[RMDB]
RNA sequence: GGGAACGACUCGAGUAGAGUCGAAAACGCACAGCGCGGCGAGCGCGCACGCGGCGACAGGGCACCCAGCGAAGCAAGCGAGGGUUCGCCCUCGCAAAAGAAACAACAACAACAAC
Reactivity to 2A3 in 0.01 (KOAc 150mM, MgCl2 10mM, bicine 150mM(pH8.5), 24C), signal-to-noise 3, nucleotides 027 to 095: c020g000c000a040c010a060g000c010g000c000g030g000c020g050a050g070c030g000c000g000c010a010c020g020c020g030g000c000g010a020c020a050g020g000g010c000a000c000c000c000a000g010c010g040a070a010g060c030a040a000g000c000g000a050g010g000g000u010u010c080g020c000c000c000u000c000g000c000a010
Reactivity to DMS in 0.01 (KOAc 150mM, MgCl2 10mM, bicine 150mM(pH8.5), 24C), signal-to-noise 6, nucleotides 027 to 095: c030g000c030a100c080a110g010c060g010c020g010g010c110g000a080g000c010g010c020g010c030a080c070g010c020g000g000c030g000a050c080a060g000g000g010c020a050c010c000c010a110g000c030g000a100a100g010c170a100a100g000c000g000a040g000g000g000u000u020c120g010c000c000c000u000c010g000c010a020
This 115-nucleotide RNA was probed chemically with 2A3 and DMS. DMS adducts were read by reverse transcription with MarathonRT.